[RMDB]
RNA sequence: GGGAACGACUCGAGUAGAGUCGAAAAGCCGGUAACAAAACUUGAGGGGCAUGCCGAGCUGGUAGCAGAACUCGUAAAUUCGCUGCUGCAAACUUAUAGUUGCCAACGACGACAACUACGCUCUAGCUGCUUAAUGCGGCUAGCAGUCGCUAGGGGAGUCACAAAUAGUCUUCGGACUAUUUGUGACAAAAGAAACAACAACAACAAC
Reactivity to 2A3 in 0.01 (KOAc 150mM, MgCl2 10mM, bicine 150mM(pH8.5), 24C), signal-to-noise 2, nucleotides 027 to 156: g030c030c050g000g010u120a160a160c110a110a120a060a090c090u150u150g050a050g030g000g020g020c030a020u060g010c000c000g010a050g040c040u030g040g060u080a020g010c000a030g020a060a050c040u010c090g140u190a090a070a060u170u110c070g000c020u040g010c000u030g000c040a050a110a000c040u120u050a040u040a150g030u010u010g000c000c000a090a010c070g070a010c010g000a030c000a020a010c100u060a020c020g000c000u000c010u020a000g000c000u000g000c010u080u130a110a010u300g000c030g000g000c010u000a000g000c000a000g000u080c010g000c090u000a000g000g010g000g050a010